Background
Conditions: 150 mM KOAc, 10 mM MgCl2 and 150 mM bicine (pH 8.5), 24 C. This 177-nucleotide RNA was probed chemically with DMS and 2A3. 2A3 adducts were read by reverse transcription with SuperScript II with manganese. The DMS profile rests on 2,682 reads. Source: RMDB library OK2TRN, as collected in RNAgym. The 2A3 profile rests on 3,008 reads.

RNA sequence: GGGAACGACUCGAGUAGAGUCGAAAAGGGAAUAGUACCGCCAGCAUCGUCGGCUUCGGCCCAGUAAAAAGAGACGCGGAAAAAUGCACAACAGGCACCACACGUCAUGCAUGGAUUCAGAUUGCUCCGAUAUGUGUGGAUUCGUCCACACAUAUCGAAAAGAAACAACAACAACAAC
Reactivity to DMS in 0.01 (KOAc 150mM, MgCl2 10mM, bicine 150mM(pH8.5), 24C), signal-to-noise 3, nucleotides 027 to 126: g000g010g000a130a050u010a080g020u000a080c050c030g010c040c010a080g010c040a060u000c100g030u000c090g000g000c020u010u010c120g000g030c020c030c040a100g010u010a080a060a050a070a060g000a100g020a070c090g040c100g020g000a030a020a070a070a040u010g020c060a040c080a070a040c090a040g010g010c020a020c040c030a030c060a040c080g010u000c070a050u000g000c010a080u000g010g000a130u000u000c060a070g000a110u000u010g010c060u010c070
Reactivity to 2A3 in 0.01 (KOAc 150mM, MgCl2 10mM, bicine 150mM(pH8.5), 24C), signal-to-noise 2, nucleotides 027 to 126: g090g000g040a060a090u070a090g060u030a050c010c010g020c010c000a020g020c020a070u070c030g110u000c050g050g000c000u050u040c050g080g030c010c000c010a050g100u200a000a140a020a000a000g090a010g010a050c050g020c040g100g050a030a040a060a010a030u100g000c020a010c010a070a170c000a060g050g000c000a010c040c000a040c010a010c070g060u040c010a030u070g070c000a030u040g000g040a040u050u100c020a020g060a160u050u170g040c020u050c050